[RMDB]
Chemical mapping of a 207-nucleotide RNA with 2A3 and DMS. 2A3 adducts were read by reverse transcription with SuperScript II with manganese.
RNA sequence: GGGAACGACUCGAGUAGAGUCGAAAACAGGAGUUUAGCAUAGCUCCAUUCUACUAUGCAGCUAGUCGUCGUUUUCGACGUCUAGGAUAGACCCCUACAGCAGGGUCAAUGAACUGCUGAUUACCGCAUCUCGUAGCGCGGGUUCUGGCUACGUACAAUACCAGUAUCAGUUCGCUGAUACUGGUAUAAAAGAAACAACAACAACAAC
Reactivity to 2A3 in 0.01 (KOAc 150mM, MgCl2 10mM, bicine 150mM(pH8.5), 24C), signal-to-noise 4, nucleotides 027 to 156: c040a050g010g010a000g020u090u120u180a020g010c010a030u050a020g000c010u020c030c010a030u120u060c010u030a080c000u000a010u070g020c020a010g070c010u010a000g020u010c010g010u010c020g050u040u080u130u300c030g020a000c010g010u000c000u000a000g000g000a010u040a040g020a020c000c010c010c040u080a070c030a000g030c000a000g010g020g000u020c040a030a070u170g040a030a020c040u020g010c000u010g040a150u060u160a060c020c000g020c030a040u070c060u010c120g000u000a000g000c010g000c020g030g060g000u050u090c070u060g060g010c000u010a010c000g020u010a020c070a030
Reactivity to DMS in 0.01 (KOAc 150mM, MgCl2 10mM, bicine 150mM(pH8.5), 24C), signal-to-noise 3, nucleotides 027 to 156: c040a060g000g010a020g000u000u000u000a080g020c010a040u000a020g020c010u010c120c290a180u000u010c000u000a030c010u000a020u000g030c020a300g020c000u000a020g020u000c000g040u000c020g020u000u000u000u000c020g010a020c010g030u000c010u010a030g000g020a300u010a100g000a030c000c010c010c020u000a300c070a040g030c070a040g000g040g010u000c050a090a090u010g030a060a080c000u000g000c000u010g020a170u000u000a070c040c020g020c050a210u020c040u010c050g020u000a040g020c010g010c050g020g030g010u000u000c050u000g010g020c020u000a020c020g000u010a070c130a100

Source: RMDB library OK3TST, as collected in RNAgym.